[RMDB]
RNA sequence: GGGAACGACUCGAGUAGAGUCGAAAAGAUAUGGAUCUUCUCCCCACCGAAAGAGAAGCGAAGAACAGACAAAGCUCGGAAACGAGCUUUGUCUGGGAGCUUCACUUUCGAGGAAGAUCCUAAGUCACAAUGCUAAACGGUUCGCCGUUUAGCAUUGAAAAGAAACAACAACAACAAC
Reactivity to DMS in 0.01 (KOAc 150mM, MgCl2 10mM, bicine 150mM(pH8.5), 24C), signal-to-noise 2, nucleotides 027 to 126: g000a020u000a210u010g000g030a000u000c000u000u000c000u020c120c090c000c060a300c170c000g000a000a000a000g010a090g000a020a000g010c010g010a110a120g020a110a250c000a000g000a010c020a000a040a010g020c010u000c000g000g020a050a100a270c010g010a010g010c000u000u000u000g000u000c000u000g000g000g000a140g000c000u000u000c000a100c030u000u000u000c000g000a150g000g000a010a000g000a020u030c000c010u000a010a090g010u020c130a190